[RMDB]
RNA sequence: GGGAACGACUCGAGUAGAGUCGAAAAGAGGUUAGCUGCUGAGCGAAGCUUUGAACUGAAGCCCCAGUAAACGGCGGCCGUAACUAUAACGGUCCUAAGGUAGCGAAAUUCCUUGUCGGGUAAGUUCUACCGAUUGAGGGUUCGCCCUCAAUCGGUAAAAAGAAACAACAACAACAAC
Reactivity to DMS in 0.01 (KOAc 150mM, MgCl2 10mM, bicine 150mM(pH8.5), 24C), signal-to-noise 1, nucleotides 027 to 126: g010a100g000g000u000u010a150g010c010u000g010c020u000g000a120g110c090g020a190a100g000c010u000u000u010g000a140a030c040u010g000a090a190g000c040c020c050c010a040g040u010a030a080a090c140g010g100c100g020g030c000c000g000u020a020a110c250u000a040u010a060a060c040g000g000u010c000c040u010a040a140g010g000u000a090g010c000g000a040a060a170u010u010c010c000u000u000g000u000c010g010g020g000u000a060a060g040u000u000c060